Source: RMDB library TTRDES, as collected in RNAgym. Chemical mapping of a 177-nucleotide RNA with 2A3 and DMS. For DMS, 4,670 sequencing reads were counted. 2A3 adducts were read by reverse transcription with SuperScript II with manganese. DMS adducts were read by reverse transcription with MarathonRT. The reactions ran in a buffer of 150 mM KOAc, 10 mM MgCl2 and 150 mM bicine (pH 8.5), at 24 C.
RNA sequence: GGGAACGACUCGAGUAGAGUCGAAAAGAUAUGGAAGCUUUGAUCUAUGGAAAGCAAUUAUGUCGGAAACGACAUCAAUUUAAGCCAUAGGGAGCUUCCUAAGUCAAAAGCGAUGCUUCGGCAUCGCCAUAGCCAAAAACUUCGGUUUUUGGCUAUGAAAAGAAACAACAACAACAAC
Reactivity to 2A3 in 0.01 (KOAc 150mM, MgCl2 10mM, bicine 150mM(pH8.5), 24C), signal-to-noise 2, nucleotides 027 to 126: g030a020u090a050u170g000g000a020a000g010c010u300u300u130g100a090u140c000u020a000u000g020g060a240a110a030g110c030a000a010u020u010a010u010g010u000c000g040g030a080a090a080c020g000a010c010a000u050c090a010a030u000u030u160a100a010g060c010c000a010u000a000g000g030g010a000g010c000u010u000c000c010u000a070a030g040u020c030a000a040a230a010g000c000g000a000u000g000c000u080u180c300g100g000c010a000u000c000g000c010
Reactivity to DMS in 0.01 (KOAc 150mM, MgCl2 10mM, bicine 150mM(pH8.5), 24C), signal-to-noise 5, nucleotides 027 to 126: g010a060u000a300u010g010g000a010a000g010c000u000u000u020g010a070u020c000u000a000u000g000g000a240a080a250g030c300a030a000u000u000a020u000g020u000c010g010g010a140a090a260c010g010a020c000a000u000c170a010a010u000u000u000a160a180g000c010c000a000u000a010g010g000g000a010g000c000u010u000c000c000u010a000a080g000u020c030a070a060a110a150g010c000g010a010u000g010c000u000u010c230g020g000c000a010u000c000g020c000